[RMDB]
RNA sequence: GGGAACGACUCGAGUAGAGUCGAAAACAACUUUUUCUUCGGAAAAAGUUGAAAAAAGCGUACUACGAGGAUGAACUACGAAUGGGUCCCAAAUAGGACCUGCAUUCGCAUCUACCCACCGUAUCGCAAAAAAGAGCCAUCGUUCGCGAUGGCUCAAGAACUAAGGGCUGUUCGCAGCCCUUAGUUCAAAAGAAACAACAACAACAAC
Reactivity to 2A3 in 0.01 (KOAc 150mM, MgCl2 10mM, bicine 150mM(pH8.5), 24C), signal-to-noise 1, nucleotides 027 to 156: c000a000a000c010u060u000u020u000u000c000u000u070c140g030g000a000a000a000a000a000g010u000u000g000a030a000a000a000a000a010g020c020g000u060a060c030u010a010c070g010a030g000g030a010u000g000a130a040c120u090a060c190g000a000a000u000g010g000g000u020c090c100c010a120a210a190u240a100g000g000a010c020c010u030g050c000a020u010u030c000g030c010a010u030c000u080a130c000c030c030a060c020c010g040u040a040u260c110g020c190a000a000a000a000a000a140g010a000g000c000c000a010u000c000g120u150u020c280g030c030g120a010u000g020g000c030u040c000a000a040